[RMDB]
RNA sequence: GGGAACGACUCGAGUAGAGUCGAAAAUGAGACCAGCCUGGCCAACACAGUGAAACCACAUCUCUGCUAAAAUCACAAAAAUUAGCUGGCCGUGGUGGCACCUGCCUGUAAUGCCAGCUACUUGGGAGGCUGAGACAUGAGAAUUGCUUGAACCUGGUCUCCUGAAGGUAUUCGUACCUUCAGGAGAAAAAGAAACAACAACAACAAC
Reactivity to 2A3 in 0.01 (KOAc 150mM, MgCl2 10mM, bicine 150mM(pH8.5), 24C), signal-to-noise 2, nucleotides 027 to 156: u150g000a020g040a030c010c010a000g010c000c020u070g090g060c020c000a060a030c040a010c000a060g020u010g020a030a050a020c060c020a080c010a090u040c060u030c030u060g010c020u040a050a090a150a150u090c020a030c080a100a150a110a070a150u050u000a020g000c020u000g060g010c030c040g020u030g020g010u010g010g040c020a160c040c090u090g020c020c020u020g100u230a090a050u130g000c000c000a000g000c000u060a090c040u030u030g000g020g000a000g020g000c030u020g020a010g010a060c050a020u130g020a010g050a050a070u080u090g040c020u050u070g010a010a040c020c010u050g010g010
This 207-nucleotide RNA was probed chemically with 2A3. 2A3 adducts were read by reverse transcription with SuperScript II with manganese. The data come from the RNA Mapping Database (RMDB), library OK3TST. For 2A3, 913 sequencing reads were counted. The RNA was probed in 150 mM KOAc, 10 mM MgCl2 and 150 mM bicine (pH 8.5) at 24 C. Reactivities are given for positions 27 through 156.